[RMDB]
RNA sequence: GGGAACGACUCGAGUAGAGUCGAAAAGCUAUGUGCUGACGGUGACUUGCGUCAGCGUGCUAGGUACUCGACUAGCACACAUAGAUCGAGUUGUGGUUCGCACUGCAAGUCACCAGUGCGACAUGUAGUCUAGAGUACAUGUAACCACACUCUAGAACGUAUCAUGCUAGUUCGCUAGCAUGAUACGAAAAGAAACAACAACAACAAC
Reactivity to DMS in 0.01 (KOAc 150mM, MgCl2 10mM, bicine 150mM(pH8.5), 24C), signal-to-noise 3, nucleotides 027 to 156: g040c020u010a020u010g010u010g040c010u020g000a040c000g040g050u030g010a100c030u000u010g000c060g050u000c060a080g000c010g040u000g040c000u000a030g010g030u000a110c120u000c110g030a100c030u010a020g010c030a050c120a300c080a100u010a080g000a130u010c060g020a090g000u000u000g020u000g010g010u000u010c040g020c020a070c040u010g000c040a040a090g010u010c010a060c030c010a010g010u010g000c000g030a050c050a020u000g030u000a010g020u000c030u000a080g000a190g030u000a050c030a050u010g000u000a090a250c040c020a100c050a080c010u000c000u010a030g010a090a240
Reactivity to 2A3 in 0.01 (KOAc 150mM, MgCl2 10mM, bicine 150mM(pH8.5), 24C), signal-to-noise 4, nucleotides 027 to 156: g030c050u070a020u120g100u090g030c010u010g010a000c000g000g000u010g030a010c000u010u090g010c010g000u040c080a010g010c010g000u010g000c000u020a020g030g070u100a100c030u030c060g040a010c010u010a010g040c050a010c010a000c010a060u100a020g140a170u050c040g000a000g020u060u020g010u040g020g000u010u020c000g000c010a000c010u030g000c010a020a000g010u000c000a000c000c000a000g000u000g030c000g000a010c010a000u010g020u000a020g040u020c050u040a030g010a000g060u010a020c020a020u050g020u080a060a040c030c000a010c000a000c020u000c010u020a040g010a110a010